[RMDB]
RNA sequence: GGGAACGACUCGAGUAGAGUCGAAAACAUGAAAUUUACCAUGGGACCAGGACAUCUUUGAGUUUGAAAUUCCAGGACAAUGGCAUGAACAAGAAAACCAUGAGUAAUCCUAGGAGGGGACCCUAAGUACAAGUCAACAAUUCGUUGUUGACUUGUAAAAAGAAACAACAACAACAAC
Reactivity to 2A3 in 0.01 (KOAc 150mM, MgCl2 10mM, bicine 150mM(pH8.5), 24C), signal-to-noise 3, nucleotides 027 to 126: c030a030u120g080a060a120a100u200u150u060a100c010c010a040u040g030g000g030a030c010c010a010g000g070a010c020a110u010c030u100u100u110g030a040g050u070u060u080g090a120a100a050u070u000c040c010a000g010g010a010c030a050a040u040g000g000c030a020u070g040a080a050c010a090a060g090a120a110a010a030c040c010a020u000g010a030g080u010a030a120u000c010c020u030a060g000g060a030g000g000g000g010a010c030c000c000u020a050a000g010
Reactivity to DMS in 0.01 (KOAc 150mM, MgCl2 10mM, bicine 150mM(pH8.5), 24C), signal-to-noise 4, nucleotides 027 to 126: c090a070u000g010a120a090a090u010u000u010a110c080c010a040u000g000g010g020a160c060c040a100g010g000a080c080a080u010c040u000u020u000g010a090g010u000u000u010g010a080a110a120u010u000c020c040a050g000g020a050c100a050a100u000g000g010c020a050u000g010a070a090c130a070a130g010a080a090a080a060c060c010a010u000g000a110g010u000a070a100u010c020c020u000a080g000g010a070g000g010g000g000a120c030c020c020u010a040a090g010
Background: An RNA of 177 nucleotides, treated with 2A3 and DMS and read out base by base. Conditions: 150 mM KOAc, 10 mM MgCl2 and 150 mM bicine (pH 8.5), 24 C. For DMS, 3,811 sequencing reads were counted.